[RMDB]
RNA sequence: GGGAACGACUCGAGUAGAGUCGAAAACAAGGAGUACGUGCUGCGCAAUGGCAGGCAUGUGACCGUGCGGGAGAACCCGCACUGGCAGUGCCGUGUCAACUACCCGUUCGCUGUCAUCCAAGGCCCGGACUUCGUGGUGUACUACGAUGAGGAAGGGGCAGUCGUACUUUUUCGAAAGUACGACUGCAAAAGAAACAACAACAACAAC
Reactivity to 2A3 in 0.01 (KOAc 150mM, MgCl2 10mM, bicine 150mM(pH8.5), 24C), signal-to-noise 1, nucleotides 027 to 156: c070a080a030g090g000a110g020u030a050c110g060u030g000c060u060g020c100g070c070a120a210u050g040g020c000a000g000g030c020a020u080g010u020g300a200c000c000g020u020g000c020g000g010g050a300g170a300a300c000c010c000g000c000a000c000u010g000g000c000a000g000u000g030c000c010g030u020g000u000c000a000a050c090u170a010c000c020c010g010u050u100c080g000c080u100g010u060c000a080u000c050c080a020a050g000g000c000c010c000g010g010a000c000u000u020c040g010u050g010g000u120g060u040a020c020u080a030c000g150a140u190g130a060g000g090a050a000g100g020g000